Structure probing data (DMS and 2A3) for a 177-nucleotide construct.
It was measured as part of the RMDB library OK2TST.
The reactions ran in a buffer of 150 mM KOAc, 10 mM MgCl2 and 150 mM bicine (pH 8.5), at 24 C.
Values cover nucleotides 27 to 126.
The DMS profile rests on 1,580 reads.
2A3 is a SHAPE reagent: it acylates the 2'-hydroxyl of flexible nucleotides of all four kinds.
RNA sequence: GGGAACGACUCGAGUAGAGUCGAAAAUUAGUCUUAUCAGUAGCAGAAGUGCUAUUCGUAACCUUAUUAUCUACAGCCGUAGCGCUCUCAACCUUCGACCCAGACUCAGUCUUAGUAGCGUCAGCCAACCCGGGAUAAAUUUCGAUUUAUCCCGGGUAAAAGAAACAACAACAACAAC
Reactivity to DMS in 0.01 (KOAc 150mM, MgCl2 10mM, bicine 150mM(pH8.5), 24C), signal-to-noise 2, nucleotides 027 to 126: u010u000a040g010u010c060u010u000a050u000c170a080g000u010a020g000c010a020g010a200a080g010u000g000c010u000a010u000u000c230g020u000a020a040c150c010u000u020a040u010u010a100u010c040u000a050c120a110g020c090c050g010u000a050g010c050g010c070u010c030u010c050a060a090c130c050u000u010c050g010a090c020c030c030a080g010a070c030u010c070a120g010u010c030u000u010a060g000u000a110g020c040g010u010c060a090g000c060c070a050
Reactivity to 2A3 in 0.01 (KOAc 150mM, MgCl2 10mM, bicine 150mM(pH8.5), 24C), signal-to-noise 1, nucleotides 027 to 126: u020u000a000g020u000c050u050u060a000u100c040a010g000u050a010g120c030a030g060a230a040g250u030g060c000u000a020u000u040c030g000u030a020a030c000c010u080u070a080u080u020a080u140c070u100a120c050a030g040c030c010g100u090a010g030c000g010c030u040c020u010c010a070a060c000c040u060u000c040g030a050c060c000c000a080g020a070c030u040c070a000g070u020c030u030u000a040g030u050a020g050c010g050u030c050a020g070c040c000a020